[RMDB]
RNA sequence: GGGAACGACUCGAGUAGAGUCGAAAAGCAGCGGCAUGGUCCUGGGUGGAGAAGAUGUUGCACGAGGCCCAGCGAACCUCGGCGCCAAGCGCGACCAGCGUCUCGAUGAGAACGGCGGUCUGGAUCGAUAAUGCAGCACGUUCGCGUGCUGCAUUAUAAAAGAAACAACAACAACAAC
Reactivity to DMS in 0.01 (KOAc 150mM, MgCl2 10mM, bicine 150mM(pH8.5), 24C), signal-to-noise 2, nucleotides 027 to 126: g000c080a030g020c040g000g000c000a110u020g000g040u010c000c000u030g000g000g080u010g070g070a160g010a030a140g020a130u010g040u030u040g000c090a200c040g030a280g020g000c020c000c030a020g000c150g000a070a100c030c000u040c140g020g010c020g020c000c000a040a190g000c010g000c030g000a090c030c050a020g020c030g040u040c020u000c000g000a070u000g000a130g000a070a110c010g000g010c040g000g000u010c080u060g010g000a050u020c050g060
Reactivity to 2A3 in 0.01 (KOAc 150mM, MgCl2 10mM, bicine 150mM(pH8.5), 24C), signal-to-noise 2, nucleotides 027 to 126: g040c000a000g000c020g160g000c010a020u030g070g050u040c000c000u070g000g000g000u040g000g120a040g000a080a020g080a090u130g100u280u090g040c080a040c060g010a030g100g000c000c010c020a050g030c080g020a020a080c000c000u030c090g080g000c000g000c010c000a040a030g070c070g020c020g000a080c010c000a000g020c020g020u000c000u000c030g190a200u190g030a080g010a160a020c080g010g000c000g030g000u040c010u000g080g060a230u090c040g000